[RMDB]
RNA sequence: GGGAACGACUCGAGUAGAGUCGAAAAUGAGAAGUCGUCAGUAGUUCGACGUGAGCAGAAGCCCGCCUCGAUAUGCUAUGUGGACGAGGGCAUGCCCAAGACACACCAUAACCCUAGCGGGACGCAAACGACUGUAACUCUUCGGAGUUACAGUCGUAAAAGAAACAACAACAACAAC
Reactivity to DMS in 0.01 (KOAc 150mM, MgCl2 10mM, bicine 150mM(pH8.5), 24C), signal-to-noise 1, nucleotides 027 to 126: u010g000a060g000a090a030g010u000c030g040u000c010a130g040u000a180g010u000u020c100g000a010c040g010u000g000a100g000c080a070g000a110a210g000c020c000c030g000c040c070u000c000g030a150u000a000u000g030c070u000a160u000g000u020g030g010a080c000g010a300g000g000g020c040a040u000g000c000c000c010a090a250g000a150c000a060c020a020c190c010a020u000a070a070c040c000c020u000a050g000c080g050g020g000a070c090g020c080a060a100